This 177-nucleotide RNA was probed chemically with 2A3 and DMS. It was measured as part of the RMDB library OK2TRN. The RNA was probed in 150 mM KOAc, 10 mM MgCl2 and 150 mM bicine (pH 8.5) at 24 C.
RNA sequence: GGGAACGACUCGAGUAGAGUCGAAAAAGCCACACUUCUCACCUGUGCAGGGACUCGUGGGCAGUGGGGUGUGCCCUGGCAGGACUCGUGGGCAGUGGGGUGUGCCUUGUUCUGGCCACGCCACUUCGUUUAGGAACAAGUUCGCUUGUUCCUAAACAAAAGAAACAACAACAACAAC
Reactivity to 2A3 in 0.01 (KOAc 150mM, MgCl2 10mM, bicine 150mM(pH8.5), 24C), signal-to-noise 7, nucleotides 027 to 126: a000g050c030c000a110c000a000c030u040u030c020u010c010a050c010c010u020g030u240g180c030a050g020g000g050a040c010u020c050g090u120g020g070g000c040a030g040u090g030g040g020g010u080g080u140g080c010c000c010u000g040g000c020a040g030g000a030c020u050c130g040u070g010g010g000c010a000g010u010g000g010g020g000u030g070u160g000c000c000u080u110g180u180u060c110u060g000g000c000c010a010c030g100c000c000a020c000u060u050c030
Reactivity to DMS in 0.01 (KOAc 150mM, MgCl2 10mM, bicine 150mM(pH8.5), 24C), signal-to-noise 7, nucleotides 027 to 126: a130g010c010c000a050c020a050c060u000u000c010u000c010a150c020c020u010g010u000g020c030a050g000g010g010a140c030u000c080g010u000g010g000g010c030a040g020u000g010g000g010g010u000g010u010g010c010c000c010u000g010g010c020a040g010g000a100c070u000c170g000u000g000g000g010c090a040g020u000g000g000g010g040u000g010u010g020c010c000u010u010g010u010u010c250u000g000g010c000c010a010c010g010c010c010a010c020u000u010c120